[RMDB]
Overview: Structure probing data (DMS and 2A3) for a 177-nucleotide construct. The reactions ran in a buffer of 150 mM KOAc, 10 mM MgCl2 and 150 mM bicine (pH 8.5), at 24 C. For 2A3 the reverse transcriptase was SuperScript II with manganese.
RNA sequence: GGGAACGACUCGAGUAGAGUCGAAAAUGAUUGUGCGUAGCACACACUCAGACUGUACGACAGUCUGACACACACCUACGCUAGUGCAUCGUGUGUGUGAUAUCGAUGUAGCACGAAAAUGAAGUAACGUAACAAGUCGUUUCGACGACUUGUUACGAAAAGAAACAACAACAACAAC
Reactivity to DMS in 0.01 (KOAc 150mM, MgCl2 10mM, bicine 150mM(pH8.5), 24C), signal-to-noise 3, nucleotides 027 to 126: u020g000a190u000u000g010u000g020c030g020u000a060g030c060a130c050a060c060a080c180u000c020a000g020a030c010u000g000u020a180c300g010a150c000a010g010u000c000u010g000a050c070a050c080a010c110a090c060c080u010a000c110g010c080u010a060g010u000g010c070a050u000c030g010u000g010u000g000u000g000u000g010a080u000a060u000c120g000a090u000g020u000a080g010c010a060c020g020a060a040a110a070u000g000a080a090g020u000a050a140
Reactivity to 2A3 in 0.01 (KOAc 150mM, MgCl2 10mM, bicine 150mM(pH8.5), 24C), signal-to-noise 3, nucleotides 027 to 126: u210g050a090u020u130g020u020g070c090g040u070a010g030c030a010c000a000c000a010c020u010c000a000g000a000c000u040g020u160a170c160g180a070c300a000g000u030c000u000g030a010c000a000c000a000c000a000c010c040u110a020c040g020c090u070a070g040u030g000c030a050u050c050g000u000g010u010g000u000g000u000g080a040u050a050u150c070g050a070u080g040u090a030g010c020a000c070g040a040a040a000a030u160g030a070a010g070u090a130a010